RNA sequence: GGGAACGACUCGAGUAGAGUCGAAAAGAUAUGGAUAUUAGCAAGGACCCAGCCUCUAUUCGGAAACGAAUAGCCCGGCUGCUGAUGACCUAAUAUCCUAAGUCAAAGCGUUACUUCGGUAACGCAACAUACCAACAUUGUUCGCAAUGUUGGUAUGAAAAGAAACAACAACAACAAC
Reactivity to 2A3 in 0.01 (KOAc 150mM, MgCl2 10mM, bicine 150mM(pH8.5), 24C), signal-to-noise 5, nucleotides 027 to 126: g030a020u070a040u120g000g000a000u000a010u020u020a020g010c100a150a120g100g050a110c040c100c030a000g010c010c000u030c000u030a000u010u000c000g010g030a060a060a050c010g010a010a000u010a010g010c110c180c040g020g000c020u020g000c040u120g060a210u100g050a050c010c000u000a000a010u010a000u000c000c000u010a090a000g060u030c060a110a110a020g000c000g010u000u000a000c000u040u090c270g140g000u000a000a000c010g000c000a000a000
Reactivity to DMS in 0.01 (KOAc 150mM, MgCl2 10mM, bicine 150mM(pH8.5), 24C), signal-to-noise 9, nucleotides 027 to 126: g000a030u000a300u000g000g000a000u000a000u000u000a000g010c060a060a170g010g010a120c150c280c020a020g000c000c010u000c000u000a000u000u000c000g010g000a100a060a180c000g010a010a000u000a010g010c300c150c300g000g020c010u000g000c140u000g010a080u000g000a260c300c000u000a000a010u000a010u000c000c000u000a030a080g010u000c040a080a080a120g010c000g010u000u000a000c000u000u020c180g020g010u000a000a000c000g010c010a030a070

Structure probing data (2A3 and DMS) for a 177-nucleotide construct. For 2A3 the reverse transcriptase was SuperScript II with manganese. The RNA was probed in 150 mM KOAc, 10 mM MgCl2 and 150 mM bicine (pH 8.5) at 24 C. The DMS profile rests on 12,256 reads.